[RMDB]
RNA sequence: GGGAACGACUCGAGUAGAGUCGAAAAUUUGGUGUCUGAUAAAAAUAUGGGAGGUGCACCAUUUUCAUUGUAGAUAAUGUGUACAAAUUACUGUGAGUGUUACAAGUGAUACUACACUCUAUACAAAGUCAGUAGGACUGUUCGCAGUCCUACUGACAAAAGAAACAACAACAACAAC
Reactivity to DMS in 0.01 (KOAc 150mM, MgCl2 10mM, bicine 150mM(pH8.5), 24C), signal-to-noise 1, nucleotides 027 to 126: u000u000u000g010g050u020g020u000c050u000g010a230u060a050a030a130a130a160u020a050u000g030g000g010a110g010g020u010g050c000a020c010c040a020u050u000u000u000c040a140u000u010g010u000a020g000a090u000a130a020u020g040u000g000u020a010c070a080a060a100u000u000a000c050u000g050u020g010a120g010u020g000u000u000a080c090a020a030g010u000g050a060u000a070c300u000a000c000a020c000u000c080u000a090u000a080c130a080a020a040
Reactivity to 2A3 in 0.01 (KOAc 150mM, MgCl2 10mM, bicine 150mM(pH8.5), 24C), signal-to-noise 1, nucleotides 027 to 126: u030u000u040g000g000u040g000u000c020u060g060a130u140a000a250a090a130a050u140a260u300g040g060g000a060g120g050u130g000c000a000c000c020a000u020u000u000u040c000a060u000u070g110u000a020g040a150u130a150a150u170g020u000g000u000a010c010a030a300a010u050u040a020c000u040g030u020g220a070g100u300g050u220u010a020c010a050a100g000u020g020a000u000a020c020u000a010c020a000c000u000c010u000a030u020a000c150a000a060a010